Structure probing data (2A3 and DMS) for a 177-nucleotide construct.
RNA sequence: GGGAACGACUCGAGUAGAGUCGAAAAGUCAUUAUGUUCGCAUAAUGACAAAUAUAUGGGACUAUAUAAUACCUGAUAGCCGUCCAAGAUCAUGUAUCGGCAAAAACAGACGAUUCGUCGUCUGUAACAAAACCUUUUCUUUCGAGAAAAGGUUUUGAAAAGAAACAACAACAACAAC
Reactivity to 2A3 in 0.01 (KOAc 150mM, MgCl2 10mM, bicine 150mM(pH8.5), 24C), signal-to-noise 1, nucleotides 027 to 126: g010u020c000a000u000u010a010u000g020u030u050c180g010c110a020u000a040a000u000g000a000c000a010a110a010u050a000u010a060u050g070g040g060a020c030u000a000u030a030u020a240a100u090a180c020c010u010g120a100u070a070g070c030c020g020u060c020c010a060a050g050a120u100c060a070u120g090u140a040u110c030g000g000c030a000a000a000a000a170c000a000g000a000c000g010a020u020u080c090g060u000c000g010u000c060u000g020u030a000a000
Reactivity to DMS in 0.01 (KOAc 150mM, MgCl2 10mM, bicine 150mM(pH8.5), 24C), signal-to-noise 2, nucleotides 027 to 126: g020u000c000a000u000u010a000u000g010u000u010c270g040c000a010u000a000a020u000g000a010c020a060a110a040u010a080u010a050u000g000g020g000a120c060u000a040u000a060u010a080a130u000a140c010c020u000g000a110u000a040g010c030c060g010u010c120c040a090a100g000a050u010c120a040u010g010u000a080u000c010g040g000c120a060a030a070a100a050c000a000g000a020c010g000a030u000u010c180g020u000c000g010u000c000u000g000u000a030a150

The DMS profile rests on 1,678 reads. 2A3 adducts were read by reverse transcription with SuperScript II with manganese.